An RNA of 177 nucleotides, treated with 2A3 and DMS and read out base by base. For 2A3 the reverse transcriptase was SuperScript II with manganese. The reactions ran in a buffer of 150 mM KOAc, 10 mM MgCl2 and 150 mM bicine (pH 8.5), at 24 C. Values cover nucleotides 27 to 126. DMS adducts were read by reverse transcription with MarathonRT. It was measured as part of the RMDB library OK1LIB.

RNA sequence: GGGAACGACUCGAGUAGAGUCGAAAACGAUAUGUGAACGCAUGUACCCUAGUGUAGCGUAUUAGUAUGCUCGUAGAACGCUACACCAUUGUCAUGAAAAUGACAAUGGUACAUGCUACGAGCAUAAGGUAGAGGUUGAUUUCGAUCGACUUCUACCAAAAGAAACAACAACAACAAC
Reactivity to 2A3 in 0.01 (KOAc 150mM, MgCl2 10mM, bicine 150mM(pH8.5), 24C), signal-to-noise 9, nucleotides 027 to 126: c030g030a060u050a080u160g180u040g110a090a010c060g000c010a000u010g000u020a020c010c010c040u040a030g000u000g000u000a000g000c000g000u020a050u030u060a030g070u010a010u010g000c000u000c000g000u000a000g000a040a000c000g000c000u000a000c000a000c000c000a010u000u000g000u000c000a000u000g050a030a030a010a020u000g000a000c000a000a000u000g000g000u010a000c000a010u030g000c000u000a000c000g000a000g000c000a000u010a010a030
Reactivity to DMS in 0.01 (KOAc 150mM, MgCl2 10mM, bicine 150mM(pH8.5), 24C), signal-to-noise 9, nucleotides 027 to 126: c130g000a100u040a020u020g010u020g010a110a090c170g000c010a010u000g000u000a060c020c070c070u020a130g000u010g020u000a000g010c000g000u000a110u040u030a070g010u010a010u000g000c000u000c000g010u000a020g010a070a030c010g000c000u000a000c010a040c000c020a010u000u000g010u000c000a000u000g000a110a060a130a010u000g000a010c000a010a000u000g000g000u000a030c090a030u010g010c000u000a000c000g000a000g000c000a000u000a040a130